[RMDB]
RNA sequence: GGGAACGACUCGAGUAGAGUCGAAAAUUGGGCUGGACCUACAGGACAAGGCUGACGUGAUAACCACUGGCGUGACAUUGGCGGCGAAAUGGGCGGCUGAUCGUUCCGCACGACCUGUGCGCGCGCCUCACGGGAUCACUUUCGAGUGAUCCCGUGAAAAAGAAACAACAACAACAAC
Reactivity to DMS in 0.01 (KOAc 150mM, MgCl2 10mM, bicine 150mM(pH8.5), 24C), signal-to-noise 3, nucleotides 027 to 126: u010u000g000g000g010c010u000g000g010a150c090c060u000a100c140a120g000g000a050c110a210a100g010g010c010u000g040a100c090g010u000g020a080u020a110a150c070c010a070c110u030g020g000c000g030u010g000a200c130a060u020u020g020g010c020g030g010c040g010a050a030a080u030g000g000g010c010g000g000c090u000g000a070u030c050g010u010u010c040c010g010c050a090c010g010a060c060c050u010g010u000g000c040g000c040g000c000g000c050c030
Reactivity to 2A3 in 0.01 (KOAc 150mM, MgCl2 10mM, bicine 150mM(pH8.5), 24C), signal-to-noise 3, nucleotides 027 to 126: u120u030g030g010g010c010u120g030g020a080c020c000u070a090c040a110g000g050a040c060a170a000g070g030c000u010g020a040c070g030u030g020a070u070a200a080c050c000a010c060u020g020g000c000g030u050g020a030c040a070u000u070g030g010c020g000g030c010g020a040a050a110u110g010g010g020c020g000g010c050u060g070a120u120c030g040u070u000c020c000g020c010a060c080g210a300c010c020u080g000u020g000c040g030c010g040c000g040c050c000
Structure probing data (DMS and 2A3) for a 177-nucleotide construct. For 2A3 the reverse transcriptase was SuperScript II with manganese. For 2A3, 2,121 sequencing reads were counted. Reactivities are given for positions 27 through 126.